[RMDB]
RNA sequence: GGGAACGACUCGAGUAGAGUCGAAAAGAUAUGGAAGGUGGGCAGCUUUUGACGGUCUACCGAUCGGAAACGAUCGAUGACCGAUAAGCUGCCACCUUCCUAAGUCAAACCACGCUUCGGCGUGGAACAAAAUAGGCAACUUCGGUUGCCUAUUUUGAAAAGAAACAACAACAACAAC
Reactivity to 2A3 in 0.01 (KOAc 150mM, MgCl2 10mM, bicine 150mM(pH8.5), 24C), signal-to-noise 2, nucleotides 027 to 126: g030a030u040a050u130g010g030a030a000g060g040u300g170g300g010c020a000g020c030u130u070u100u290g300a180c030g000g030u020c000u030a070c040c060g000a000u000c000g000g060a080a040a110c020g020a010u010c000g020a020u030g000a000c020c010g000a000u000a010a000g010c010u000g010c000c000a000c000c000u000u000c010c000u000a000a000g000u020c000a030a000a030c000c000a000c000g000c010u080u190c300g190g000c000g030u000g010g000a050a000
Reactivity to DMS in 0.01 (KOAc 150mM, MgCl2 10mM, bicine 150mM(pH8.5), 24C), signal-to-noise 3, nucleotides 027 to 126: g010a040u020a300u010g010g000a010a000g020g010u010g040g010g030c010a010g010c000u000u000u000u000g020a270c150g000g000u000c000u020a090c100c000g000a000u000c000g000g000a100a080a230c000g010a030u000c000g000a040u000g000a000c000c000g020a070u010a000a020g000c000u000g010c020c010a000c000c000u000u000c000c000u000a000a060g010u000c030a160a170a260c000c000a000c000g000c000u000u020c200g020g020c000g010u000g000g000a050a120

This 177-nucleotide RNA was probed chemically with 2A3 and DMS. The DMS profile rests on 3,206 reads. 2A3 adducts were read by reverse transcription with SuperScript II with manganese.